Source: RMDB library RFMREP, as collected in RNAgym. This 177-nucleotide RNA was probed chemically with DMS and 2A3. The DMS profile rests on 2,104 reads. Reactivities are given for positions 27 through 126. Conditions: 150 mM KOAc, 10 mM MgCl2 and 150 mM bicine (pH 8.5), 24 C. DMS adducts were read by reverse transcription with MarathonRT.

RNA sequence: GGGAACGACUCGAGUAGAGUCGAAAAUCGUCAAGAAACAGAAACCGCAACAGGGUGUCGCAGUAAUAAUCUUUCAGAAAGCGGGCAGUUUUAUGCCUGAUAUUACACCACGCUUUCGGUUUGGAAAGAAAUCAUUCAUGUUCGCAUGAAUGAUUUCAAAAGAAACAACAACAACAAC
Reactivity to DMS in 0.01 (KOAc 150mM, MgCl2 10mM, bicine 150mM(pH8.5), 24C), signal-to-noise 3, nucleotides 027 to 126: u010c050g020u010c090a140a120g000a190a070a140c070a220g010a080a040a010c040c030g020c300a040a050c150a030g010g000g040u000g000u010c090g010c100a110g010u000a040a030u000a060a130u000c030u000u010u000c250a120g010a070a060a060g010c020g000g020g010c000a040g000u010u000u020u020a070u000g020c020c010u000g010a070u000a010u000u000a020c010a140c050c000a030c020g000c010u000u000u000c010g000g000u000u010u000g010g000a090a050a110
Reactivity to 2A3 in 0.01 (KOAc 150mM, MgCl2 10mM, bicine 150mM(pH8.5), 24C), signal-to-noise 2, nucleotides 027 to 126: u030c000g060u030c050a020a040g070a110a170a020c020a030g190a060a020a020c020c000g000c060a000a040c020a090g110g020g020u010g090u100c070g000c070a040g010u000a000a000u000a030a060u050c030u020u160u060c080a110g080a130a080a010g040c020g020g000g030c010a000g000u080u160u170u210a030u040g030c000c000u020g020a010u000a000u060u020a000c000a020c000c000a030c020g220c040u020u030u020c030g040g000u030u040u050g050g040a060a090a040